[RMDB]
RNA sequence: GGGAACGACUCGAGUAGAGUCGAAAACGGCUAAAACCCGAAACGCGCAAACCCUAGCGUAUGAGCGCAAAACGGGGCGUGUUGUACAGGAGUUUGACGCUUAACAUGAUCUGUCAGGGAACCCCGGGCUGGGAGGUGGUUUCGACCAUCUCUCGGUAAAAGAAACAACAACAACAAC
Reactivity to DMS in 0.01 (KOAc 150mM, MgCl2 10mM, bicine 150mM(pH8.5), 24C), signal-to-noise 9, nucleotides 027 to 126: c130g000g000c020u000a060a020a030a030c030c000c000g010a040a050a040c040g000c000g000c010a070a090a300c010c000c020u000a110g010c020g010u010a090u040g010a150g010c010g010c010a050a040a110a120c250g000g000g000g010c040g010u000g000u000u010g000u020a080c110a140g000g000a090g010u000u000u000g000a100c120g000c020u000u010a090a090c140a070u020g010a080u020c080u000g000u010c080a070g000g000g010a070a020c030c000c000c010g000g010
Reactivity to 2A3 in 0.01 (KOAc 150mM, MgCl2 10mM, bicine 150mM(pH8.5), 24C), signal-to-noise 9, nucleotides 027 to 126: c020g010g000c010u020a010a010a020a030c000c000c000g020a020a020a010c030g000c000g000c020a040a020a130c010c000c000u010a020g000c000g010u050a160u270g180a130g030c000g000c000a030a060a020a050c080g010g000g040g010c020g010u100g020u020u040g070u060a080c090a100g010g040a230g050u010u030u040g070a040c060g000c000u020u030a020a010c020a070u080g020a040u040c010u030g060u040c030a020g000g000g040a020a020c000c000c000c010g000g040